Chemical mapping of a 177-nucleotide RNA with DMS and 2A3. The RNA was probed in 150 mM KOAc, 10 mM MgCl2 and 150 mM bicine (pH 8.5) at 24 C. The data come from the RNA Mapping Database (RMDB), library TTRINS. As a SHAPE reagent, 2A3 marks flexible, mostly unpaired nucleotides at the ribose 2'-OH. Values cover nucleotides 27 to 126.
RNA sequence: GGGAACGACUCGAGUAGAGUCGAAAAGAUAUGGAUGUGCUACCCACCGAGUGCUUUCGAAGAACCAUGAUGAUUCGGAAACGAAUCAUCAUGGGGAGAAAGUUAACUCGAGGCACAUCCUAAGUCAGGAAUAUAAUGUCUUCGGACAUUAUAUUCCAAAAGAAACAACAACAACAAC
Reactivity to DMS in 0.01 (KOAc 150mM, MgCl2 10mM, bicine 150mM(pH8.5), 24C), signal-to-noise 4, nucleotides 027 to 126: g010a080u000a200u000g020g000a000u000g010u000g010c000u000a170c050c000c040a300c150c000g000a010g050u000g000c000u000u010u000c010g030a120a230g010a180a250c000c010a040u000g010a020u010g000a000u000u010c000g020g010a120a070a190c000g000a020a000u000c000a000u010c010a000u000g000g000g000g000a060g000a010a000a010g010u000u010a090a000c000u010c000g010a070g020g000c010a020c000a010u000c000c000u000a000a060g020u010c230a150
Reactivity to 2A3 in 0.01 (KOAc 150mM, MgCl2 10mM, bicine 150mM(pH8.5), 24C), signal-to-noise 4, nucleotides 027 to 126: g170a110u290a210u300g020g000a000u000g000u000g000c020u140a300c000c040c020a020c020c000g000a000g010u010g050c020u030u010u010c120g190a300a070g010a070a050c000c000a000u000g000a000u000g000a000u020u000c010g000g000a050a090a040c020g000a000a000u000c000a000u000c000a010u000g000g000g000g000a040g010a000a000a010g020u050u160a080a020c000u000c000g010a010g000g000c000a000c000a020u000c000c000u020a060a010g240u150c290a090